[RMDB]
RNA sequence: GGGAACGACUCGAGUAGAGUCGAAAACGGUGAAUCCUCCCCUGAGGGGCCUCUUUCCAGGUCCGGAGUCUACUUCCAUCUGGACCACCCGGGCCUUCUUCGCCGGGGGCGCCCCUUCUCCGUCCCUAAAGCAAAUUGUUCGCAAUUUGCAAAAGAAACAACAACAACAAC
Reactivity to DMS in 0.01 (KOAc 150mM, MgCl2 10mM, bicine 150mM(pH8.5), 24C), signal-to-noise 9, nucleotides 027 to 129: c130g030g030u010g040a120a100u050c020c010u020c030c010c020c030u050g020a060g020g000g000g000c030c070u000c070u030u060u060c110c140a020g050g000u020c000c000g040g010a070g020u010c070u050a080c180u040u060c130c110a140u010c150u070g000g000a030c020c060a120c030c030c020g010g030g040c000c020u030u060c030u040u040c150g020c090c020g000g000g000g000g000c260g000c020c000c030c000u040u020c020u000c040c010g030u030c030c010c020u000a000a090a090
Reactivity to 2A3 in 0.01 (KOAc 150mM, MgCl2 10mM, bicine 150mM(pH8.5), 24C), signal-to-noise 9, nucleotides 027 to 129: c030g020g010u060g060a080a090u180c010c010u050c000c010c000c010u030g040a040g010g010g020g010c010c010u080c040u060u150u070c070c060a030g000g000u000c010c010g000g010a010g000u030c050u120a100c070u280u090c070c030a160u060c060u100g000g000a010c000c000a080c030c010c000g010g010g000c030c000u080u040c030u060u060c060g100c070c040g010g000g000g000g000c020g050c000c000c000c000u020u020c000u010c000c000g040u060c010c000c010u070a090a080a000

Structure probing data (DMS and 2A3) for a 170-nucleotide construct.
The reactions ran in a buffer of 150 mM KOAc, 10 mM MgCl2 and 150 mM bicine (pH 8.5), at 24 C.
It was measured as part of the RMDB library 15KLIB.
Reactivities are given for positions 27 through 129.